[RMDB]
The record gives the reactivity of an RNA of 177 nucleotides to 2A3 and DMS.
Reactivities are rounded to 0.1 and cut off at 0 and 3.
The RNA was probed in 150 mM KOAc, 10 mM MgCl2 and 150 mM bicine (pH 8.5) at 24 C.
RNA sequence: GGGAACGACUCGAGUAGAGUCGAAAAGUAUCGACACUCAUAUAAUCUGCGACUUUAACUGCUAGUUCGGCAAAAUGAUCGCCAGAUGAUAAACUGGCAGUUGCUGGUAGUUCGAUAACUAAAUCAGCUCAAAUCGUAGGUUCGCCUACGAUUUGAGAAAAGAAACAACAACAACAAC
Reactivity to 2A3 in 0.01 (KOAc 150mM, MgCl2 10mM, bicine 150mM(pH8.5), 24C), signal-to-noise 2, nucleotides 027 to 126: g020u020a030u020c000g020a000c000a010c100u050c100a080u210a040u020a170a120u020c050u060g010c000g040a020c030u070u030u110a040a010c000u020g020c000u010a000g130u140u110c100g000g000c040a040a040a070a170u180g030a150u200c040g000c010c010a040g020a110u100g030a000u120a120a130a010c010u020g020g000c000a040g070u040u120g020c010u000g000g030u010a030g030u020u030c000g000a020u030a100a000c030u090a090a030a090u110c050a000g010
Reactivity to DMS in 0.01 (KOAc 150mM, MgCl2 10mM, bicine 150mM(pH8.5), 24C), signal-to-noise 2, nucleotides 027 to 126: g010u010a010u000c020g010a080c140a150c040u010c160a130u000a090u020a080a100u010c060u030g000c050g010a080c080u000u020u000a060a060c040u000g000c020u010a080g000u000u000c130g000g010c050a050a080a090a130u020g000a160u000c170g010c030c040a100g020a080u010g010a190u000a040a080a030c000u000g000g000c010a070g000u000u000g010c050u000g000g000u010a050g000u010u000c070g010a030u000a010a090c030u010a030a110a140u000c110a110g000